The record gives the reactivity of an RNA of 177 nucleotides to 2A3 and DMS. It was measured as part of the RMDB library OK2TST. For 2A3, 18,019 sequencing reads were counted. DMS adducts were read by reverse transcription with MarathonRT.

RNA sequence: GGGAACGACUCGAGUAGAGUCGAAAACUGUACGAUUACCUCGUGGUGGGGAUGGUGUCUGAGACGCUGUUCCGGCCCAAGGUUCCCGGGGCGCUCAAGGAGUUUCUCGCGAGGGCCGGACAGAUCGAAGAGAACGAUAGUUCGCUAUCGUUCUCUUAAAAGAAACAACAACAACAAC
Reactivity to 2A3 in 0.01 (KOAc 150mM, MgCl2 10mM, bicine 150mM(pH8.5), 24C), signal-to-noise 7, nucleotides 027 to 126: c010u040g060u120a030c030g050a090u050u150a110c010c010u020c050g050u090g040g060u100g010g010g000g030a020u030g010g020u040g010u000c030u070g070a040g010a090c070g010c060u010g060u210u040c000c000g000g000c000c000c010a020a040g070g020u060u090c000c020c010g000g010g000g000c030g010c000u040c090a180a140g140g010a010g080u020u060u020c040u020c010g060c030g040a090g000g000g000c000c000g000g000a000c000a000g010a030u120c030g030
Reactivity to DMS in 0.01 (KOAc 150mM, MgCl2 10mM, bicine 150mM(pH8.5), 24C), signal-to-noise 9, nucleotides 027 to 126: c050u000g010u000a050c090g010a110u000u010a100c070c060u000c050g020u000g010g030u010g010g010g010g000a050u000g010g010u000g010u000c030u000g010a150g010a080c110g010c010u000g010u000u000c000c000g010g010c000c000c000a090a130g010g000u000u000c040c110c000g010g010g000g000c240g010c020u000c040a150a150g010g000a050g010u000u000u000c010u000c020g010c110g000a280g010g000g020c030c000g000g000a010c020a010g000a120u010c120g000